An RNA of 177 nucleotides, treated with 2A3 and DMS and read out base by base. The 2A3 profile rests on 3,282 reads. For DMS the reverse transcriptase was MarathonRT. The data come from the RNA Mapping Database (RMDB), library TTRDEL.

[RMDB]
RNA sequence: GGGAACGACUCGAGUAGAGUCGAAAAGAUAUGGACUAGAACUACAUCCCAUCGCUUCGAGGAUCUCGGAAACGAGGGAGAAGCGAGGGAUGCUAGUCCUAAGUCAAAAGCUCGGUUCGCCGAGCAAGGGUGUAGCAUAGUUCGCUAUGCUACACCCAAAAGAAACAACAACAACAAC
Reactivity to 2A3 in 0.01 (KOAc 150mM, MgCl2 10mM, bicine 150mM(pH8.5), 24C), signal-to-noise 2, nucleotides 027 to 126: g000a010u140a070u190g000g010a020c000u010a000g000a080a050c100u120a040c290a010u040c010c010c030a300u020c020g000c000u030u000c010g120a300g020g020a020u000c000u000c030g070g030a080a080a060c090g000a000g000g000g000a040g000a000a010g030c000g000a000g000g010g010a000u000g030c010u000a000g000u030c000c000u000a070a030g040u030c020a030a060a050a060g000c000u010c050g000g060u090u110c300g070c070c000g000a000g000c000a010a020
Reactivity to DMS in 0.01 (KOAc 150mM, MgCl2 10mM, bicine 150mM(pH8.5), 24C), signal-to-noise 1, nucleotides 027 to 126: g000a050u010a300u010g000g010a000c000u000a030g000a040a030c080u000a290c010a010u010c000c020c000a100u000c000g040c010u000u000c020g000a070g000g000a040u000c030u000c000g020g000a080a110a230c000g020a010g030g000g000a000g010a060a000g010c000g010a040g000g000g000a020u010g000c050u000a000g030u000c000c010u010a020a060g010u020c000a110a100a130a160g010c000u000c000g040g000u000u010c150g010c000c000g000a010g020c020a010a020